This 177-nucleotide RNA was probed chemically with DMS and 2A3.
DMS adducts were read by reverse transcription with MarathonRT.
The DMS profile rests on 12,982 reads.
[RMDB]
RNA sequence: GGGAACGACUCGAGUAGAGUCGAAAACUCGAAAGAGACCUGCAUAUCUUAGGCAGAUGAGCAAGUCGCGUCUGAAAAGCGAAAGCCCUAAGAUAUGCAGCUGUGAUGACUUGUCGCAGAAAAUAAAAAUCAUAUGAGGUUUCGACCUCAUAUGAUUAAAAGAAACAACAACAACAAC
Reactivity to DMS in 0.01 (KOAc 150mM, MgCl2 10mM, bicine 150mM(pH8.5), 24C), signal-to-noise 5, nucleotides 027 to 126: c000u000c010g000a090a130a130g010a030g010a120c250c000u010g000c000a000u010a000u000c000u000u000a010g010g010c010a010g000a010u010g000a020g000c010a010a010g010u020c010g000c010g000u000c000u020g010a210a090a160a130g000c020g000a170a070a170g020c010c000c000u010a000a010g000a010u000a000u000g000c000a020g000c030u000g010u000g000a010u030g000a010c020u000u000g000u000c010g010c010a020g000a150a060a080a100u050a010a050a080
Reactivity to 2A3 in 0.01 (KOAc 150mM, MgCl2 10mM, bicine 150mM(pH8.5), 24C), signal-to-noise 8, nucleotides 027 to 126: c010u010c010g030a040a050a000g060a000g030a040c010c010u000g000c000a000u000a000u000c000u000u000a000g000g000c000a000g000a030u010g010a020g040c010a020a000g010u020c010g010c000g030u000c000u020g110a270a230a170a040g010c020g050a070a020a010g000c000c000c000u000a000a000g000a000u000a000u000g000c000a000g000c000u010g000u010g000a010u030g020a020c010u000u030g000u010c000g000c010a000g100a050a080a020a010u290a020a080a020